[RMDB]
The record gives the reactivity of an RNA of 177 nucleotides to 2A3 and DMS. For DMS, 1,285 sequencing reads were counted.

RNA sequence: GGGAACGACUCGAGUAGAGUCGAAAACUGAGUAAUGCAUCGCUCCCCACCUUCCGGGGUGAGCCUGGUGCUGAUGAAAGGUCACACGCCCGUCGUCGCUGACUCGUUCGUAGCGCAUGAGAGUACGGUUGCUUGUGUGGUUCGCCACACAAGCAACAAAAGAAACAACAACAACAAC
Reactivity to 2A3 in 0.01 (KOAc 150mM, MgCl2 10mM, bicine 150mM(pH8.5), 24C), signal-to-noise 1, nucleotides 027 to 126: c050u030g040a010g020u050a030a030u050g000c020a000u040c000g010c050u060c000c030c000c000a160c040c080u220u090c050c050g040g030g010g070u160g030a010g000c000c040u060g000g000u000g000c050u060g120a030u020g000a030a010a000g000g000u020c020a050c010a000c050g040c030c000c010g040u050c010g020u000c010g060c070u030g060a140c010u020c040g100u240u050c050g090u130a030g030c030g000c100a090u100g070a100g000a000g140u090a070c140g050
Reactivity to DMS in 0.01 (KOAc 150mM, MgCl2 10mM, bicine 150mM(pH8.5), 24C), signal-to-noise 2, nucleotides 027 to 126: c010u000g000a070g000u000a040a060u010g010c010a020u000c020g000c020u000c000c010c000c010a160c080c150u010u000c190c130g020g000g030g000u010g000a020g030c050c040u020g010g040u000g030c010u000g000a070u000g000a120a070a190g000g020u000c080a140c110a120c140g000c020c030c010g000u000c030g000u000c050g030c030u000g010a020c070u000c130g000u010u000c070g010u000a080g000c050g010c070a080u000g020a090g010a130g030u010a070c110g000
For DMS the reverse transcriptase was MarathonRT. High DMS reactivity at an A or C suggests that its Watson-Crick edge is free.